[RMDB]
RNA sequence: GGGAACGACUCGAGUAGAGUCGAAAAGAUAUGGAGCAUAUUGUCAGCGAAAACUCACCACGAGGCUUUCGGAAACGAAAGCUACCCACCGUGGGAGUUUUCGCUUGGAUUUAUAUGCUCCUAAGUCGUCCUAGAUAAUGUUCGCAUUAUCUAGGACAAAAGAAACAACAACAACAAC
Reactivity to 2A3 in 0.01 (KOAc 150mM, MgCl2 10mM, bicine 150mM(pH8.5), 24C), signal-to-noise 2, nucleotides 027 to 126: g100a040u150a080u300g010g020a000g010c020a010u040a000u040u040g020u030c000a000g000c010g000a000a000a000a000c020u020c030a300c090c010a000c000g000a010g000g000c000u010u020u000c020g030g050a130a060a020c010g000a020a000a000g000c000u020a040c050c080c060a100c000c030g000u020g000g010g030a000g000u000u000u000u010c000g000c000u010u040g010g000a000u000u300u000a000u000a000u000g010c000u000c000c000u000a010a000g030u040c060
Reactivity to DMS in 0.01 (KOAc 150mM, MgCl2 10mM, bicine 150mM(pH8.5), 24C), signal-to-noise 3, nucleotides 027 to 126: g000a080u000a300u010g010g020a010g010c000a000u000a000u000u000g000u000c000a050g020c000g000a010a010a000a030c010u000c010a200c000c010a020c020g000a090g020g000c000u000u000u010c000g010g010a130a110a220c000g000a000a000a000g010c010u000a010c030c030c160a300c110c020g020u000g020g000g000a020g010u000u000u000u000c000g010c010u010u010g020g000a020u000u010u000a000u020a010u000g010c000u010c000c000u000a000a080g000u010c160